[RMDB]
Overview:
An RNA of 177 nucleotides, treated with DMS and 2A3 and read out base by base. Values cover nucleotides 27 to 126. For DMS the reverse transcriptase was MarathonRT. The RNA was probed in 150 mM KOAc, 10 mM MgCl2 and 150 mM bicine (pH 8.5) at 24 C. For 2A3, 12,605 sequencing reads were counted.
RNA sequence: GGGAACGACUCGAGUAGAGUCGAAAAAGCUCCUGUUUCGACAGGAGCUGUGUGCCUGCCCUUUUGUGCUCGAUGUAGAGUGCUUUCCUGCCGGAAAGGGCUUGAGAGCUUGAUUCGUCAAGCUCAAGGAGUUUAAAUAUUUCGAUAUUUAAACUCCAAAAGAAACAACAACAACAAC
Reactivity to DMS in 0.01 (KOAc 150mM, MgCl2 10mM, bicine 150mM(pH8.5), 24C), signal-to-noise 8, nucleotides 027 to 126: a010g010c000u000c000c000u000g010u000u000u010c160g010a030c000a010g000g000a010g020c000u000g000u000g020u000g010c000c010u000g010c010c000c010u000u000u000u000g020u000g010c000u000c020g010a190u010g010u010a130g000a040g020u000g000c010u000u000u000c020c010u010g010c220c150g010g000a020a020a020g000g000g010c010u000u010g010a160g000a010g000c000u000u000g000a030u000u010c180g010u000c000a010a000g010c000u000c000a050a090
Reactivity to 2A3 in 0.01 (KOAc 150mM, MgCl2 10mM, bicine 150mM(pH8.5), 24C), signal-to-noise 5, nucleotides 027 to 126: a000g010c000u000c010c000u010g010u010u070u050c190g080a000c000a010g000g000a000g000c010u000g000u010g000u040g050c000c000u000g000c010c010c000u000u070u070u080g020u020g010c010u000c020g100a140u260g080u250a110g010a020g030u030g010c000u060u070u020c020c020u070g190c050c050g010g010a010a010a010g000g020g010c000u050u090g120a090g000a000g010c000u010u010g010a020u030u030c020g010u010c040a000a010g000c000u000c000a000a060